An RNA of 207 nucleotides, treated with 2A3 and DMS and read out base by base. 2A3 adducts were read by reverse transcription with SuperScript II with manganese. Values cover nucleotides 27 to 156.

RNA sequence: GGGAACGACUCGAGUAGAGUCGAAAACGCUGGGCAUGCGUGGCGAGUGGCUCUUUUGACGUUCAGUACUGAAGCGCGCACGGUAUGGGAACGAUAAGAGCCACUCGCGUAACAUCGCAUGCCUGUGCUGAAGCGCGCACGGCAACCGAAAGGUGCGGACACAAUAACUGUUCGCAGUUAUUGUGUCAAAAGAAACAACAACAACAAC
Reactivity to 2A3 in 0.01 (KOAc 150mM, MgCl2 10mM, bicine 150mM(pH8.5), 24C), signal-to-noise 4, nucleotides 027 to 156: c070g010c010u030g000g000g040c000a010u000g010c020g010u010g120g000c020g010a000g000u000g000g010c000u000c010u040u080u050u170g220a090c030g010u000u010c040a030g000u000a000c000u020g100a280a040g020c020g020c010g020c000a050c020g030g010u000a010u060g300g070g020a020a000c020g030a040u070a200a040g000a000g000c000c020a000c000u000c000g000c000g000u000a000a010c020a050u100c000g010c010a000u000g000c000c000u000g000u010g000c010u060g040a080a030g000c020g000c000g000c020a010c020g080g010c040a110a110c040c010g060a100a050a040g040g010u040g000c010g050
Reactivity to DMS in 0.01 (KOAc 150mM, MgCl2 10mM, bicine 150mM(pH8.5), 24C), signal-to-noise 1, nucleotides 027 to 156: c090g040c010u010g000g010g000c000a020u010g010c000g050u020g020g010c090g000a040g040u010g020g010c000u000c010u000u000u000u000g010a240c060g010u010u000c000a150g000u000a010c000u010g010a080a090g000c040g070c000g020c040a300c030g000g020u000a010u000g000g090g030a040a010c010g000a220u000a020a050g020a050g010c000c000a000c000u000c000g050c000g010u010a020a120c080a130u000c000g000c000a020u000g000c000c010u000g000u000g020c010u000g010a120a100g030c030g010c010g020c020a130c020g000g000c020a120a220c020c020g020a040a130a180g030g020u010g000c020g010